[RMDB]
Conditions: 150 mM KOAc, 10 mM MgCl2 and 150 mM bicine (pH 8.5), 24 C. An RNA of 177 nucleotides, treated with DMS and read out base by base. The DMS profile rests on 1,459 reads.
RNA sequence: GGGAACGACUCGAGUAGAGUCGAAAACUAAUGGGCGAAGAAGGGAAGUACUGGUCAAAGCAAGGAAGGCCCUCUGUGGGAACUUUUCCUACGACCCUGAAAUGGAUGCUUUUCAAUGUGAAUGUGGAUAGACAGGGAGUUUCGACUCCCUGUCUAUAAAAGAAACAACAACAACAAC
Reactivity to DMS in 0.01 (KOAc 150mM, MgCl2 10mM, bicine 150mM(pH8.5), 24C), signal-to-noise 2, nucleotides 027 to 126: c050u000a090a120u020g000g010g020c050g010a090a080g000a180a060g010g000g010a050a100g020u000a040c070u010g010g020u000c050a110a070a090g000c100a050a090g000g010a080a040g000g010c030c020c040u000c200u010g020u010g000g000g010a090a090c130u000u000u000u010c000c000u000a090c060g000a130c070c010c050u010g000a040a090a080u010g000g010a110u000g000c030u000u000u010u010c090a040a120u010g000u010g010a060a030u000g000u000g000g010